[RMDB]
RNA sequence: GGGAACGACUCGAGUAGAGUCGAAAAAUAAACAGCCUUAGCGUAUGUUUUCAUCCCAUCAAAUAAUACGCGAGGUAACAAUGACUGUACGCGUAUUAAUCAGUCAAUAACGCUAAGGUAAAAAAAAGGCAUCAAUUAGAUUCGUCUAAUUGAUGCCAAAAGAAACAACAACAACAAC
Reactivity to 2A3 in 0.01 (KOAc 150mM, MgCl2 10mM, bicine 150mM(pH8.5), 24C), signal-to-noise 2, nucleotides 027 to 126: a000u180a000a090a010c040a040g050c000c000u010u000a000g020c000g010u070a080u250g100u050u020u120u110c050a040u050c000c040c020a000u140c010a000a180a090u090a010a000u020a010c000g010c000g000a030g140g080u040a030a020c050a020a170u070g030a000c000u020g010u060a070c010g000c000g000u000a000u010u000a080a070u070c000a000g060u000c010a020a050u130a070a020c000g000c000u010a010a010g040g000u040a080a020a000a000a010a000a000a040
Background: The record gives the reactivity of an RNA of 177 nucleotides to 2A3. The RNA was probed in 150 mM KOAc, 10 mM MgCl2 and 150 mM bicine (pH 8.5) at 24 C. For 2A3, 1,511 sequencing reads were counted.